[RMDB]
RNA sequence: GGGAACGACUCGAGUAGAGUCGAAAACAGUAUGCCUUCGGGCAUACUGAAACCAGAGGGUAUCUGGCCCACGCUCCCAAGCGUGCCGGGAAUCCCAUCCCAAAACGGAUGUCUUCGGACAUCCGAAGAUGUGAGUUAUGUUCGCAUAACUCACAUCAAAAGAAACAACAACAACAAC
Reactivity to DMS in 0.01 (KOAc 150mM, MgCl2 10mM, bicine 150mM(pH8.5), 24C), signal-to-noise 5, nucleotides 027 to 126: c000a010g020u000a000u000g000c000c000u000u030c220g050g010g020c010a000u000a000c010u000g000a030a050a100c070c070a060g010a080g000g010g010u000a050u000c000u000g000g000c300c150c080a030c010g010c010u000c160c150c260a120a040g010c010g020u000g010c110c120g000g000g020a070a090u000c000c000c010a160u000c000c000c010a060a050a060a230c020g010g000a010u000g010u000c000u010u020c180g000g000a020c000a000u000c000c010g000a020a030
Reactivity to 2A3 in 0.01 (KOAc 150mM, MgCl2 10mM, bicine 150mM(pH8.5), 24C), signal-to-noise 1, nucleotides 027 to 126: c000a000g000u000a010u000g000c000c010u060u120c290g090g010g000c000a000u000a000c000u000g000a040a000a000c030c010a020g100a100g080g050g030u090a070u120c010u010g030g000c020c090c000a000c000g000c000u120c020c050c000a010a020g000c000g000u010g000c000c030g020g010g040a030a060u050c000c010c000a050u030c030c010c010a040a060a010a020c010g000g000a000u000g000u000c010u050u080c230g080g000a000c000a000u000c000c000g000a010a020